An RNA of 177 nucleotides, treated with DMS and 2A3 and read out base by base.

RNA sequence: GGGAACGACUCGAGUAGAGUCGAAAAGACUGGGCAAGGUGCGGGGCUAGGGCUAACAGCAGUCUUACUGACGGUUUCCUGGAAACCACACACAUGCUGUUGCCACUAACCUCAACCUUACUCGGAAUUCUCAAAAUACCUUCGGGUAUUUUGAGAAAAAAGAAACAACAACAACAAC
Reactivity to DMS in 0.01 (KOAc 150mM, MgCl2 10mM, bicine 150mM(pH8.5), 24C), signal-to-noise 3, nucleotides 027 to 126: g000a130c000u000g010g000g000c040a010a030g010g040u000g010c190g000g000g000g030c050u020a020g000g000g000c000u010a010a000c010a010g010c010a000g020u010c110u020u040a120c260u030g010a080c150g000g000u010u000u000c000c160u010g020g010a020a020a010c000c000a100c100a080c300a120c140a130u000g000c000u030g010u000u000g000c010c000a080c010u010a010a030c000c000u000c010a060a010c000c000u000u000a010c010u000c020g020g000a160a120
Reactivity to 2A3 in 0.01 (KOAc 150mM, MgCl2 10mM, bicine 150mM(pH8.5), 24C), signal-to-noise 5, nucleotides 027 to 126: g050a010c020u010g010g000g000c000a000a000g000g010u070g050c180g030g000g000g000c010u000a000g030g010g000c050u100a010a000c000a000g000c000a010g010u030c050u100u160a140c070u090g070a060c070g020g000u020u000u000c070c100u090g090g120a000a000a010c000c000a020c000a010c000a020c010a160u030g000c000u000g000u000u000g000c000c000a270c100u000a000a010c000c000u000c000a000a010c000c000u000u000a000c000u000c000g000g010a010a110
Values cover nucleotides 27 to 126. Values are in units of 0.01, from 0 to 300, in steps of 10.